[RMDB]
RNA sequence: GGGAACGACUCGAGUAGAGUCGAAAAGCGUACUACAAGCGAAGUUAGUCGUUGAAAUGGAUGAACUACCUACUCCCAAAUAGGAGUAGGCAUCCAUGGAGACUAAUGUAUGCUUGUAUCGCAAACAAUCGAUAGGUCUUCGGACCUAUCGAUUGAACCUGGGAAGUUUGUUCGCAAACUUCCCAGGAAAAGAAACAACAACAACAAC
Reactivity to 2A3 in 0.01 (KOAc 150mM, MgCl2 10mM, bicine 150mM(pH8.5), 24C), signal-to-noise 2, nucleotides 027 to 156: g000c000g110u150a040c040u040a000c040a000a000g010c000g000a050a030g000u020u000a010g000u000c120g180u250u040g030a000a020a000u010g040g020a010u010g040a080a080c060u120a040c290c000u010a000c010u000c010c050c030a290a270a160u300a180g000g000a000g010u000a000g000g010c000a000u000c000c000a000u010g000g000a070g000a000c010u000a000a020u300g130u100a000u220g000c010u000u000g000u000a000u040c000g010c000a000a000a100c010a000a010u000c000g020a000u000a000g000g010u000c010u050u180c300g090g010a000c000c040u000a000u000c000g000a000u000u000g000a000a000
Chemical mapping of a 207-nucleotide RNA with 2A3. High 2A3 reactivity points to a flexible backbone, as in loops and unpaired stretches. The data come from the RNA Mapping Database (RMDB), library RNAMAK. The reactions ran in a buffer of 150 mM KOAc, 10 mM MgCl2 and 150 mM bicine (pH 8.5), at 24 C.